An RNA of 177 nucleotides, treated with 2A3 and DMS and read out base by base. The reactions ran in a buffer of 150 mM KOAc, 10 mM MgCl2 and 150 mM bicine (pH 8.5), at 24 C.
[RMDB]
RNA sequence: GGGAACGACUCGAGUAGAGUCGAAAAUGGUUGGUCUAUAUAUUUAAAGUAUAGUCCUGUCCUAUGGCAAUCUACUUUAAAAUGGAUCGUUCAAAUGAUAUUCUACAAAUCUAAAAAUUGGGUUCCAGUGACUCACUAUAUUCGUAUAGUGAGUCACAAAAGAAACAACAACAACAAC
Reactivity to 2A3 in 0.01 (KOAc 150mM, MgCl2 10mM, bicine 150mM(pH8.5), 24C), signal-to-noise 1, nucleotides 027 to 126: u080g000g010u020u000g000g000u000c000u000a020u000a020u010a100u120u210u280a180a180a090g000u000a000u000a030g030u000c010c010u030g170u230c010c000u050a100u140g000g000c000a050a250u030c030u030a020c000u090u130u160a090a060a100a100u230g010g060a160u010c030g030u000u040c000a100a000a000u070g020a020u030a080u160u120c010u010a130c040a060a150a110u000c000u230a060a030a210a150a200u230u160g100g000g000u090u000c000c000a020
Reactivity to DMS in 0.01 (KOAc 150mM, MgCl2 10mM, bicine 150mM(pH8.5), 24C), signal-to-noise 1, nucleotides 027 to 126: u000g000g040u010u010g010g000u000c010u010a010u000a040u000a210u010u000u000a170a100a200g000u000a000u000a000g010u000c000c010u000g010u000c010c030u000a150u000g010g060c030a140a110u000c030u000a000c030u020u000u020a170a060a090a240u000g050g020a080u000c010g000u000u000c020a060a070a100u000g000a060u000a080u030u010c060u020a050c070a010a030a040u000c060u000a050a090a010a020a120u000u000g000g000g010u030u000c020c120a150